[RMDB]
RNA sequence: GGGAACGACUCGAGUAGAGUCGAAAAGAUAUGGAAUAUAACUUAGCGGGAGCUGAUGGUAGCUUCCCUAUAUCGGAAACGAUAUAGCAGCUACACAGCUUUGAUCGCUAAGUUAUAUUCCUAAGUCGAAGACCAUAAUGUUCGCAUUAUGGUCUUCAAAAGAAACAACAACAACAAC
Reactivity to DMS in 0.01 (KOAc 150mM, MgCl2 10mM, bicine 150mM(pH8.5), 24C), signal-to-noise 3, nucleotides 027 to 126: g010a100u010a300u000g000g000a030a000u000a000u000a010a010c000u000u000a000g010c000g010g000g010a020g010c010u000g010a120u010g030g030u000a010g000c000u000u000c180c140c010u000a000u000a010u000c000g020g010a130a130a210c010g000a010u000a010u000a000g100c170a010g010c000u010a010c010a110c010a010g000c000u000u000u010g000a090u020c010g000c000u000a000a000g000u000u000a000u000a000u000u000c000c000u010a020a080g010u010c130
The record gives the reactivity of an RNA of 177 nucleotides to DMS.
For DMS the reverse transcriptase was MarathonRT.